RNA sequence: GGGAACGACUCGAGUAGAGUCGAAAAGGUUGCUGAAGACGCCAUAUUCCGUCUCCCUUUACCGAUGUGCCCCUUCUUGGGGCCAGGCCGUCGGCUGAUGAGGUUAGGGACUAACCAUGGCAGCCAAUGCUACUAUCCCCUUCGGGGGAUAGUAGCAAAAAGAAACAACAACAACAAC
Reactivity to 2A3 in 0.01 (KOAc 150mM, MgCl2 10mM, bicine 150mM(pH8.5), 24C), signal-to-noise 2, nucleotides 027 to 126: g000g000u010u020g000c110u100g060a090a000g080a000c040g000c150c040a140u100a180u170u180c080c020g000u020c010u050c030c000c000u000u060u100a030c010c000g010a040u200g060u210g040c040c000c000c000u000u260c110u180u300g000g000g000g000c010c000a000g000g000c020c010g250u190c150g040g000c030u000g040a140u110g070a080g070g000u000u030a010g010g030g000a000c000u050a020a000c020c000a060u030g000g000c010a000g010c000c000a020a020
Reactivity to DMS in 0.01 (KOAc 150mM, MgCl2 10mM, bicine 150mM(pH8.5), 24C), signal-to-noise 2, nucleotides 027 to 126: g000g000u000u000g010c020u020g030a040a030g010a150c050g030c130c080a050u010a070u010u070c180c060g000u000c090u010c000c020c010u000u040u000a050c020c010g000a120u050g020u100g010c020c000c000c000u010u030c260u020u020g040g000g000g000c000c010a050g000g010c110c030g030u010c130g040g000c120u020g000a100u000g000a160g000g010u030u030a030g010g010g000a070c160u000a110a010c150c140a070u070g020g000c000a040g020c030c000a060a060